[RMDB]
RNA sequence: GGGAACGACUCGAGUAGAGUCGAAAAUGUAUGCCAAUGACACCCCGUUCCUGUCUUCUCCCCAGACAGACAACUGGAGAGGUCGAGAACCAGCAGGUAGGGAUCGUAACUCGCCCCUGAUGCACGGCGUACCACCAUGCUUCGGCAUGGUGGUACGAAAAGAAACAACAACAACAAC
Reactivity to DMS in 0.01 (KOAc 150mM, MgCl2 10mM, bicine 150mM(pH8.5), 24C), signal-to-noise 1, nucleotides 027 to 126: u000g020u000a020u000g020c080c050a050a020u000g000a100c050a080c000c000c060c020g050u000u000c000c000u020g050u000c020u010u000c140u010c030c010c010c110a190g000a120c010a030g000a180c300a030a060c010u000g020g000a140g000a080g000g010u000c070g000a060g070a080a140c050c040a030g000c070a000g030g010u000a030g030g000g000a080u000c070g020u020a010a090c160u010c070g000c230c000c070c020u020g000a080u000g000c040a120c080g000g090
The data come from the RNA Mapping Database (RMDB), library OK2TST. This 177-nucleotide RNA was probed chemically with DMS.